[RMDB]
RNA sequence: GGGAACGACUCGAGUAGAGUCGAAAACGGCCGGGCAACAUUCCGAGGGGACCGUCCCUCGGUAAUGGCGAAUGGGACCCAGAAAUCUCCUUUGAUUCCCAGAGAGAAUCAGGAGAAAACUGGCUCUGAAUCGUGCGGUUCGCCGCACGAAAAAGAAACAACAACAACAAC
Reactivity to DMS in 0.01 (KOAc 150mM, MgCl2 10mM, bicine 150mM(pH8.5), 24C), signal-to-noise 3, nucleotides 027 to 129: c120g060g000c060c030g000g040g030c140a070a080c030a090u000u020c010c010g020a060g050g010g000g010a050c090c300g030u060c000c000c040u000c040g000g000u030a020a000u010g020g000c080g010a050a050u020g020g000g040a050c190c010c000a030g020a040a080a160u100c000u010c020c000u000u080u060g010a020u000u010c000c020c140a170g030a110g020a220g020a050a020u010c000a050g010g000a000g000a020a010a100a090c040u030g030g030c110u000c020u000g030a150a080
Reactivity to 2A3 in 0.01 (KOAc 150mM, MgCl2 10mM, bicine 150mM(pH8.5), 24C), signal-to-noise 3, nucleotides 027 to 129: c010g040g000c010c000g010g000g030c040a070a030c000a020u020u050c000c020g000a010g050g000g020g090a050c050c050g270u170c030c000c000u000c020g000g000u010a030a030u020g000g030c030g040a040a000u120g000g000g030a010c040c030c000a000g000a010a260a010u000c020u000c000c000u000u020u220g000a000u010u030c020c060c100a070g050a010g020a100g000a160a000u000c010a010g000g000a000g000a000a020a000a000c000u000g030g000c020u000c000u020g080a070a070